Annotation: Structure probing data (DMS and 2A3) for a 177-nucleotide construct. The RNA was probed in 150 mM KOAc, 10 mM MgCl2 and 150 mM bicine (pH 8.5) at 24 C. The DMS profile rests on 1,739 reads. For DMS the reverse transcriptase was MarathonRT.

[RMDB]
RNA sequence: GGGAACGACUCGAGUAGAGUCGAAAAGAUAUGGAUAGUAUUCAGGACAUGUAUAGAAUCGGAAACGAUUCAUAUACAACAGCCUGAUACUAUCCUAAGUCAAAACGCGGUCCUUCGGGACCGCGAAGUCACAUUGUUAGUUCGCUAACAAUGUGACAAAAGAAACAACAACAACAAC
Reactivity to DMS in 0.01 (KOAc 150mM, MgCl2 10mM, bicine 150mM(pH8.5), 24C), signal-to-noise 2, nucleotides 027 to 126: g010a040u000a300u000g010g000a010u000a000g000u000a010u000u040c000a020g010g000a170c100a120u000g010u000a000u000a010g010a020a010u000c000g010g020a100a110a130c000g010a010u000u010c000a090u000a020u050a000c010a060a110c300a220g000c000c010u000g000a040u000a000c000u000a010u000c000c000u000a000a020g010u010c040a100a080a110a200c020g050c030g000g000u000c010c000u000u020c240g010g000g020a010c000c000g050c000g000a000a020
Reactivity to 2A3 in 0.01 (KOAc 150mM, MgCl2 10mM, bicine 150mM(pH8.5), 24C), signal-to-noise 2, nucleotides 027 to 126: g020a000u040a030u090g010g010a000u010a000g010u000a050u120u300c000a010g010g060a130c130a300u180g020u000a000u010a020g020a000a010u010c010g000g010a040a020a000c010g000a000u000u050c010a010u010a000u000a020c030a180a070c050a120g300c010c000u000g000a000u000a000c000u010a000u000c000c000u000a020a010g020u000c000a030a050a100a140c020g010c020g050g030u020c040c000u110u200c280g070g000g020a000c000c000g000c000g000a010a000